Structure probing data (DMS and 2A3) for a 177-nucleotide construct. The RNA was probed in 150 mM KOAc, 10 mM MgCl2 and 150 mM bicine (pH 8.5) at 24 C.
RNA sequence: GGGAACGACUCGAGUAGAGUCGAAAAAACGUUAACGAAUUAAUAAUUGUCGUUUGAUCAGCUUGUGAUACUGUCGCAUUAUUCGAAAUAUUGGCAAUUCUAACAGGAUUAGCAGCCGUUGAUGAAGAAUGAUAUCACCGUUCGCGGUGAUAUCAUUAAAAGAAACAACAACAACAAC
Reactivity to DMS in 0.01 (KOAc 150mM, MgCl2 10mM, bicine 150mM(pH8.5), 24C), signal-to-noise 3, nucleotides 027 to 126: a090a030c050g010u000u000a040a030c020g000a090a060u000u010a090a130u030a110a050u010u000g000u000c010g000u010u000u000g000a180u020c070a090g020c090u000u000g000u000g010a060u000a090c140u020g000u000c040g010c100a040u000u000a050u000u010c140g020a090a060a060u010a080u000u010g020g020c030a060a050u000u010c070u010a060a120c110a090g000g000a150u010u000a100g010c100a070g000c060c050g000u010u000g010a060u000g000a080a100g000
Reactivity to 2A3 in 0.01 (KOAc 150mM, MgCl2 10mM, bicine 150mM(pH8.5), 24C), signal-to-noise 1, nucleotides 027 to 126: a000a000c050g000u090u010a040a000c010g050a060a110u130u080a140a030u180a100a070u060u050g040u030c000g010u080u000u130g090a060u050c000a000g060c100u070u100g000u040g050a010u070a140c030u140g020u050c020g000c000a030u060u180a060u140u240c010g040a000a000a090u170a050u080u090g020g000c090a020a020u030u040c020u000a020a060c030a070g000g100a130u020u090a030g000c030a020g000c050c090g040u080u070g020a060u070g000a020a060g060

Notes
Reactivities are given for positions 27 through 126. The data come from the RNA Mapping Database (RMDB), library OK2TRN.